Chemical mapping of a 177-nucleotide RNA with 2A3 and DMS. For DMS the reverse transcriptase was MarathonRT.

RNA sequence: GGGAACGACUCGAGUAGAGUCGAAAACAGAGCAGCCACAGCUUUGCCAUCUCCGCAGAGCAUCGCAUGUUCAGUCAGCAAAGGUCAGGGAAGGUGUUAGGCUGUGCAUGCCCUCGUAUGCAAGAGGAACCGCCCAAUUUUUCGAAAUUGGGCGGUUAAAAGAAACAACAACAACAAC
Reactivity to 2A3 in 0.01 (KOAc 150mM, MgCl2 10mM, bicine 150mM(pH8.5), 24C), signal-to-noise 1, nucleotides 027 to 126: c010a010g060a000g070c030a000g050c030c040a040c000a040g050c000u070u030u010g060c010c020a080u080c040u000c060c010g060c030a030g030a020g080c030a050u180c100g040c030a030u040g040u030u060c030a070g220u040c010a020g030c080a180a050a010g090g050u190c080a030g000g000g080a080a000g030g000u030g000u120u110a040g020g000c000u010g000u010g010c020a010u030g000c000c000c010u050c020g080u100a080u190g050c060a060a060g010a010g000g000
Reactivity to DMS in 0.01 (KOAc 150mM, MgCl2 10mM, bicine 150mM(pH8.5), 24C), signal-to-noise 1, nucleotides 027 to 126: c040a070g010a080g000c010a070g030c210c020a040c100a060g000c000u000u000u000g000c020c050a080u000c040u000c010c130g030c050a110g010a090g000c000a070u000c170g010c000a210u000g020u020u000c080a000g040u000c020a080g040c070a020a120a140g030g010u010c080a080g000g000g000a050a130g000g050u000g000u000u000a070g000g000c030u000g060u010g000c070a070u000g000c000c000c040u000c080g000u000a040u010g020c110a130a100g000a080g000g000

Values are in units of 0.01, from 0 to 300, in steps of 10. For 2A3 the reverse transcriptase was SuperScript II with manganese.